[RMDB]
This 177-nucleotide RNA was probed chemically with 2A3 and DMS. Conditions: 150 mM KOAc, 10 mM MgCl2 and 150 mM bicine (pH 8.5), 24 C. For DMS the reverse transcriptase was MarathonRT. For 2A3, 3,237 sequencing reads were counted.
RNA sequence: GGGAACGACUCGAGUAGAGUCGAAAAACGGCCGAAGACGCGAAUUUACCAGAACUACCGACGAUUGCAUACGUCAGAAGGGUCGUGGAGGUACCGGACAGAAAUGAACCAACACCGGGAGAUAGAGGAAGCCAUAAUAAUUCGUUAUUAUGGCUUCAAAAGAAACAACAACAACAAC
Reactivity to 2A3 in 0.01 (KOAc 150mM, MgCl2 10mM, bicine 150mM(pH8.5), 24C), signal-to-noise 4, nucleotides 027 to 126: a000c000g040g000c000c030g070a030a040g040a020c050g060c010g040a110a110u100u090u110a120c030c020a050g060a090a060c070u080a050c040c090g040a040c010g070a110u070u190g070c060a050u110a220c020g010u020c020a020g030a110a070g110g000g010u000c010g000u030g010g070a040g030g010u050a100c020c000g000g030a010c010a040g140a050a180a040u120g030a040a060c010c000a030a040c050a010c060c000g000g040g030a090g010a040u160a030g140a040g230
Reactivity to DMS in 0.01 (KOAc 150mM, MgCl2 10mM, bicine 150mM(pH8.5), 24C), signal-to-noise 7, nucleotides 027 to 126: a070c080g010g000c020c020g020a110a110g010a070c040g030c070g020a070a090u000u010u000a120c080c050a100g010a090a070c110u000a110c070c040g000a070c080g010a090u010u000g000c160a140u010a080c020g010u000c030a070g010a120a100g000g000g020u000c010g020u010g010g010a150g010g010u010a090c050c020g000g010a140c100a090g010a050a050a070u000g010a110a120c030c030a080a090c130a090c040c020g000g000g010a110g010a120u000a080g010a130g010